RNA sequence: GGGAACGACUCGAGUAGAGUCGAAAACCGUCAUCAACGGAACAGUUAAUAUAACUGCAAAGAACGAAAAUUCUUACGCUUUAGCUGCUUAAUAACCAGCUAGCGUGAUCCUUCCGACUUCGCUCAAGGGUCGGGUCUGGGUCUCAAAUUAUUGAGCGCCUCUUAACACCUUCGGGUGUUAAGAGGCAAAAGAAACAACAACAACAAC
Reactivity to 2A3 in 0.01 (KOAc 150mM, MgCl2 10mM, bicine 150mM(pH8.5), 24C), signal-to-noise 1, nucleotides 027 to 156: c040c000g160u120c080a200u070c010a010a190c020g070g040a040a050c010a010g000u100u030a170a070u160a210u140a170a030c000u060g010c120a080a040a170g060a110a010c080g130a100a060a020a060u120u070c060u050u080a040c010g000c010u140u120u200a020g000c010u000g000c000u000u090a020a020u020a040a030c030c000a000g000c020u000a000g000c000g000u000g000a010u010c000c010u040u020c000c000g000a000c000u000u000c030g000c000u000c000a000a000g020g000g010u010c020g000g040g020u060c080u050g000g010g000u000c010u000c070a100a160a100u260u160a080u020u020g000a000g000c000
Chemical mapping of a 207-nucleotide RNA with 2A3. 2A3 adducts were read by reverse transcription with SuperScript II with manganese. Values cover nucleotides 27 to 156.